An RNA of 177 nucleotides, treated with DMS and read out base by base. Reactivities are given for positions 27 through 126.

RNA sequence: GGGAACGACUCGAGUAGAGUCGAAAAGAUAUGGAGGAUCCAACAGCAUGUCCGUCGGAAACGACGGCAUGACAUGGAUUUCCUAAGUCAAAAGGUUCCUGAUCCCGUUCGCGGGAUCAGGAACCAACAUAUGGGAGCUGUUCGCAGCUCCCAUAUGAAAAGAAACAACAACAACAAC
Reactivity to DMS in 0.01 (KOAc 150mM, MgCl2 10mM, bicine 150mM(pH8.5), 24C), signal-to-noise 1, nucleotides 027 to 126: g000a020u000a300u010g000g000a070g000g000a000u000c000c010a040a080c220a200g010c010a000u000g010u010c000c010g020u000c000g000g000a070a070a160c010g000a010c010g000g000c010a000u010g000a020c070a100u000g010g000a030u000u000u000c000c000u020a060a180g000u000c010a070a060a130a090g000g020u000u000c010c000u000g000a000u000c020c000c000g040u010u000c260g010c000g070g000g010a000u010c000a000g000g010a010a000c000c000a020a040

For DMS the reverse transcriptase was MarathonRT. It was measured as part of the RMDB library TTRDEL. The RNA was probed in 150 mM KOAc, 10 mM MgCl2 and 150 mM bicine (pH 8.5) at 24 C. For DMS, 1,107 sequencing reads were counted.